[RMDB]
An RNA of 207 nucleotides, treated with DMS and 2A3 and read out base by base.
Conditions: 150 mM KOAc, 10 mM MgCl2 and 150 mM bicine (pH 8.5), 24 C.
For DMS, 2,227 sequencing reads were counted.

RNA sequence: GGGAACGACUCGAGUAGAGUCGAAAACGGAAGAUUCGUCUUCCGAAAAACCGUAGGUGCUACUCCCCACCGUCUGGUGAACGAAGAACUUCGAAAGAGGGGAGUUCAUCCAGACGAGGUAGCACCUAAACGGAAAAAACUCGUAUUCGUACGAGAAGUCCUUAUCUUAGUUCGCUAAGAUAAGGACAAAAGAAACAACAACAACAAC
Reactivity to DMS in 0.01 (KOAc 150mM, MgCl2 10mM, bicine 150mM(pH8.5), 24C), signal-to-noise 1, nucleotides 027 to 156: c050g000g030a010a000g000a080u000u000c300g000u000c020u000u000c010c000g050a000a060a060a070a040c040c020g080u000a010g010g020u000g000c020u000a010c000u010c220c070c030c120a300c220c020g000u000c000u020g030g070u000g000a000a030c020g020a160a180g010a210a210c000u000u000c020g000a210a090a260g000a020g010g020g000g000a210g000u000u000c000a010u000c020c000a000g000a010c010g000a110g050g000u000a030g020c000a000c010c000u010a000a010a070c040g010g000a000a040a090a020a090a230c000u000c040g020u000a070u000u000c220g060u000a020c000g000a040g030a020a120
Reactivity to 2A3 in 0.01 (KOAc 150mM, MgCl2 10mM, bicine 150mM(pH8.5), 24C), signal-to-noise 4, nucleotides 027 to 156: c010g010g000a010a000g000a020u090u120c190g050u000c110u000u040c000c020g030a060a020a000a020a000c010c020g000u010a000g000g000u000g010c000u000a000c020u140c050c010c000c000a020c000c010g000u010c000u010g000g000u010g010a000a000c010g100a270a120g000a050a020c000u010u030c030g060a120a050a020g010a010g040g030g010g000a030g000u000u000c040a070u090c010c020a000g000a000c000g000a000g000g020u010a000g000c000a000c000c000u000a010a000a000c000g000g010a040a020a000a090a010a040c010u010c010g000u000a020u090u070c270g030u080a000c010g010a010g020a020a020